[RMDB]
An RNA of 177 nucleotides, treated with 2A3 and DMS and read out base by base.
It was measured as part of the RMDB library OK2TST.
For 2A3, 969 sequencing reads were counted.
DMS adducts were read by reverse transcription with MarathonRT.
The RNA was probed in 150 mM KOAc, 10 mM MgCl2 and 150 mM bicine (pH 8.5) at 24 C.
Reactivities are given for positions 27 through 126.
2A3 is a SHAPE reagent: it acylates the 2'-hydroxyl of flexible nucleotides of all four kinds.

RNA sequence: GGGAACGACUCGAGUAGAGUCGAAAAGAACGAUUGUCAGCAAUUGCCAUUUCACUAGCAUUUUGACUUGUGCUGAAUUAUUACCAUUGUUCAAAUCUGACAAAAAUUCGGGCAAGCGUUCAGGGCGACUCUGCAUCAGUUUCGACUGAUGCAGAGUAAAAGAAACAACAACAACAAC
Reactivity to 2A3 in 0.01 (KOAc 150mM, MgCl2 10mM, bicine 150mM(pH8.5), 24C), signal-to-noise 1, nucleotides 027 to 126: g000a000a020c010g040a080u030u080g070u090c030a030g040c070a090a130u100u050g060c000c020a040u090u120u020c030a050c090u120a080g040c040a140u060u090u050u140g100a110c000u010u040g040u050g100c050u040g030a030a030u060u070a070u110u120a070c000c070a000u010u050g050u020u030c000a040a090a160u070c120u090g040a000c030a020a230a000a010a010u010u020c010g000g010g010c030a070a060g080c000g000u090u040c020a020g010g030g080c050g030
Reactivity to DMS in 0.01 (KOAc 150mM, MgCl2 10mM, bicine 150mM(pH8.5), 24C), signal-to-noise 2, nucleotides 027 to 126: g010a060a040c090g000a160u010u050g040u010c030a030g020c120a040a140u000u010g000c010c010a030u000u020u000c080a100c120u000a090g000c090a050u010u000u000u000g010a030c050u000u000g060u020g030c070u000g000a050a070u000u000a040u010u000a140c100c140a100u000u000g000u000u040c030a040a090a170u000c100u000g050a070c070a030a040a090a060a110u010u010c000g010g010g000c000a020a120g000c050g000u000u000c040a120g020g020g010c100g000